[RMDB]
RNA sequence: GGGAACGACUCGAGUAGAGUCGAAAACACUUGCAAAUACAUACUUUGGGUGUACCUGGACCAGAUCUUACUGAUUAGGCUAGACAUCCAGUUAUGAUUGAGGAAGUUGGUUCUAUGCAGGUCCUGGGAGGUUCAGUACUUUCGAGUACUGAACCUCAAAAGAAACAACAACAACAAC
Reactivity to 2A3 in 0.01 (KOAc 150mM, MgCl2 10mM, bicine 150mM(pH8.5), 24C), signal-to-noise 1, nucleotides 027 to 126: c040a000c000u010u060g010c040a010a150a030u070a090c000a020u050a050c050u050u140u110g000g040g000u000g000u090a150c020c020u000g110g060a300c010c020a010g000a100u000c040u040u170a170c060u030g020a100u000u040a050g000g020c010u000a020g000a010c030a040u000c000c000a000g000u040u040a050u020g100a130u000u170g060a100g060g020a070a020g070u200u180g090g020u070u000c050u090a040u070g000c000a010g030g030u010c000c030u040g020g110
Reactivity to DMS in 0.01 (KOAc 150mM, MgCl2 10mM, bicine 150mM(pH8.5), 24C), signal-to-noise 2, nucleotides 027 to 126: c210a100c020u000u000g000c030a060a030a120u010a090c040a030u000a020c110u010u020u020g010g000g000u000g010u000a090c210c040u000g000g010a130c000c000a300g000a070u000c050u030u000a110c270u000g000a020u000u010a110g000g000c090u000a090g000a060c030a030u000c000c000a020g010u020u020a010u000g010a080u010u010g010a160g000g000a030a050g020u010u000g010g000u000u000c020u000a110u000g000c040a050g010g010u000c080c030u000g020g020
Conditions: 150 mM KOAc, 10 mM MgCl2 and 150 mM bicine (pH 8.5), 24 C. Chemical mapping of a 177-nucleotide RNA with 2A3 and DMS. Reactivities are given for positions 27 through 126. For 2A3, 1,040 sequencing reads were counted.